Chemical mapping of a 177-nucleotide RNA with 2A3 and DMS. In probing experiments dimethyl sulfate is read out at A N1 and C N3, which are open when not base-paired. For 2A3, 1,507 sequencing reads were counted.

[RMDB]
RNA sequence: GGGAACGACUCGAGUAGAGUCGAAAAGAAAGCGCGAAUCGUAUUCCGGUUGGCCGGGCUAAAGAACAGGAAAUGCCGGGCACGGCAAACUGCGGUGCGAGCGAAGCUCGCAGGUGAGAGCGCGAAAGGGUAAUCUUAUGUUCGCAUAAGAUUACCCAAAAGAAACAACAACAACAAC
Reactivity to 2A3 in 0.01 (KOAc 150mM, MgCl2 10mM, bicine 150mM(pH8.5), 24C), signal-to-noise 2, nucleotides 027 to 126: g080a000a110a030g010c000g000c000g110a080a070u030c000g000u030a130u120u020c040c000g050g130u130u030g220g000c000c000g060g000g000c000u050a080a110a020g070a250a120c040a080g110g050a120a140a080u150g040c040c010g000g000g010c040a020c000g000g000c010a020a020a100c040u100g010c030g020g020u080g000c020g040a000g040c080g070a030a020g000c000u000c000g000c030a000g000g000u120g010a060g000a000g000c000g000c020g030a020a000a030
Reactivity to DMS in 0.01 (KOAc 150mM, MgCl2 10mM, bicine 150mM(pH8.5), 24C), signal-to-noise 3, nucleotides 027 to 126: g000a080a100a180g000c000g030c020g020a100a080u000c020g020u010a150u030u040c000c020g000g010u010u000g020g010c010c010g000g000g030c010u000a110a130a130g010a100a160c130a090g010g020a100a140a090u020g020c090c020g030g020g000c030a050c000g030g000c030a050a020a010c010u000g000c080g010g050u020g000c000g020a010g000c030g000a120a160g020c010u000c020g000c000a060g020g010u020g010a030g000a270g000c030g020c010g020a030a050a080